Structure probing data (DMS and 2A3) for a 177-nucleotide construct. The RNA was probed in 150 mM KOAc, 10 mM MgCl2 and 150 mM bicine (pH 8.5) at 24 C. 2A3 adducts were read by reverse transcription with SuperScript II with manganese. Reactivities are given for positions 27 through 126.

RNA sequence: GGGAACGACUCGAGUAGAGUCGAAAACGACAGUAGUCGAAGAGGUUUUGAUGCCGGUGUUAAGGGAACGGUGGGUGGGAUGAAUAUGCCCGACAUGGCGGCAGUUCUGCACGCGGCUGUUCACAAACGUCCCAUAAUGGUUCGCCAUUAUGGGACGAAAAGAAACAACAACAACAAC
Reactivity to DMS in 0.01 (KOAc 150mM, MgCl2 10mM, bicine 150mM(pH8.5), 24C), signal-to-noise 1, nucleotides 027 to 126: c070g000a100c020a100g000u000a090g020u000c090g000a070a060g000a080g000g010u000u000u000u030g000a180u000g010c060c000g030g010u000g010u000u000a100a230g000g020g030a160a020c080g030g070u000g000g020g020u050g000g000g000a010u010g000a020a000u000a050u030g050c000c000c000g000a120c080a070u030g000g000c020g060g040c030a030g010u000u000c000u000g030c000a010c030g050c020g030g010c010u000g000u010u000c010a000c120a080a090a130
Reactivity to 2A3 in 0.01 (KOAc 150mM, MgCl2 10mM, bicine 150mM(pH8.5), 24C), signal-to-noise 2, nucleotides 027 to 126: c010g150a030c010a030g290u300a030g000u100c010g030a060a060g020a030g150g000u080u060u060u180g030a010u060g020c000c000g050g000u010g000u070u170a000a050g030g000g000a140a000c050g030g040u190g070g020g050u300g010g040g000a010u030g010a020a030u170a130u170g030c000c030c000g080a050c110a060u180g110g000c040g000g020c000a010g000u040u000c000u020g000c000a000c000g140c030g000g000c010u010g040u100u080c050a000c040a050a100a000
For DMS, 1,698 sequencing reads were counted. It was measured as part of the RMDB library OK1LIB.